[RMDB]
RNA sequence: GGGAACGACUCGAGUAGAGUCGAAAACAUGGUGGCAAGUACGACGCGAUAUUGCGCCACCUGCAAUAGAAGCGUAGACAUCAACUGUAGCGAGAGCUACUCAACUUAUGGACCUUAGAGCAUGCGAAGACGACUGGUCCUGUCGGAAUUCGCUAGACCAUAAAUAUCCGUUCGCGGAUAUUUAUGGAAAAGAAACAACAACAACAAC
Reactivity to 2A3 in 0.01 (KOAc 150mM, MgCl2 10mM, bicine 150mM(pH8.5), 24C), signal-to-noise 7, nucleotides 027 to 156: c070a040u110g010g010u020g020g020c050a060a060g060u040a060c080g010a030c030g070c010g070a060u030a020u060u080g030c040g010c030c020a050c010c020u020g000c010a040a040u050a050g070a140a010g030c020g010u030a050g050a100c030a040u070c040a040a130c070u060g000u010a000g010c010g000a040g010a010g070c000u010a020c020u020c040a040a090c030u110u100a030u110g040g010a030c010c020u060u120a050g010a030g100c060a050u090g000c020g010a010a000g040a050c010g000a010c010u050g050g030u050c030c030u010g000u010c000g000g040a100a090u030u010c000g000c030u020a030g030a080
Reactivity to DMS in 0.01 (KOAc 150mM, MgCl2 10mM, bicine 150mM(pH8.5), 24C), signal-to-noise 3, nucleotides 027 to 156: c020a060u010g020g030u000g000g070c030a060a050g030u000a110c000g030a030c030g040c040g020a260u000a040u000u000g000c110g000c010c050a040c090c020u000g010c020a060a070u010a080g000a130a140g030c050g040u000a110g020a120c110a130u000c050a030a070c060u010g000u000a040g030c030g020a270g010a250g010c000u000a010c010u000c070a070a100c080u010u010a080u000g020g000a030c010c010u000u000a080g000a150g020c050a070u000g000c020g020a190a160g000a110c050g000a130c040u000g010g010u020c040c030u000g020u020c020g000g010a100a200u000u000c020g000c040u000a110g010a300
Record summary:
The record gives the reactivity of an RNA of 207 nucleotides to 2A3 and DMS. Reactivities are given for positions 27 through 156. 2A3 adducts were read by reverse transcription with SuperScript II with manganese. DMS adducts were read by reverse transcription with MarathonRT.